Structure probing data (2A3 and DMS) for a 207-nucleotide construct.
The DMS profile rests on 1,757 reads.
Reactivities are rounded to 0.1 and cut off at 0 and 3.
The RNA was probed in 150 mM KOAc, 10 mM MgCl2 and 150 mM bicine (pH 8.5) at 24 C.
Reactivities are given for positions 27 through 156.

RNA sequence: GGGAACGACUCGAGUAGAGUCGAAAACACGUCGAAGGUUAACAUCUUAUAAUCGCUAAUGUAUAGAUUGUUUUCAGUGAGAUGAUUAUUAGAUUUAAUAGCAUCUCGUUCACGUUUGAACAGUUUAUUGCGUGCACUGAGAUCGGCAACUACAGCAGUCCUCUGAGAAUUUCGAUUCUCAGAGGACAAAAGAAACAACAACAACAAC
Reactivity to 2A3 in 0.01 (KOAc 150mM, MgCl2 10mM, bicine 150mM(pH8.5), 24C), signal-to-noise 2, nucleotides 027 to 156: c030a010c040g060u050c000g040a060a040g140g030u040u030a000a030c010a050u000c020u060u100a030u020a120a070u090c020g000c030u040a140a040u150g010u020a090u030a070g050a080u030u080g060u040u050u060u070c050a030g040u050g150a030g000a080u100g030a030u010u000a000u020u040a030g050a170u100u050u150a020a070u020a020g050c070a030u000c000u000c000g000u010u020c040a030c070g000u030u000u170g160a070a030c020a070g040u040u150u080a080u060u090g000c040g010u030g000c020a000c050u140g000a010g000a030u020c000g030g000c020a040a050c080u190a100c020a030g000c000a000
Reactivity to DMS in 0.01 (KOAc 150mM, MgCl2 10mM, bicine 150mM(pH8.5), 24C), signal-to-noise 1, nucleotides 027 to 156: c030a110c070g030u010c010g030a140a120g010g030u000u010a060a080c040a100u000c060u040u000a100u000a110a130u000c110g030c050u000a130a080u010g020u000a040u020a030g000a000u000u000g010u000u000u000u000c060a100g030u000g010a050g000a030u000g000a100u010u040a030u000u000a030g000a270u020u010u000a010a030u000a020g040c000a030u000c030u000c010g000u030u000c060a050c080g020u010u010u000g010a050a020c020a070g020u000u000u010a070u000u000g010c030g000u000g030c180a090c200u000g010a080g000a040u000c080g010g020c030a090a060c000u030a050c080a070g000c070a190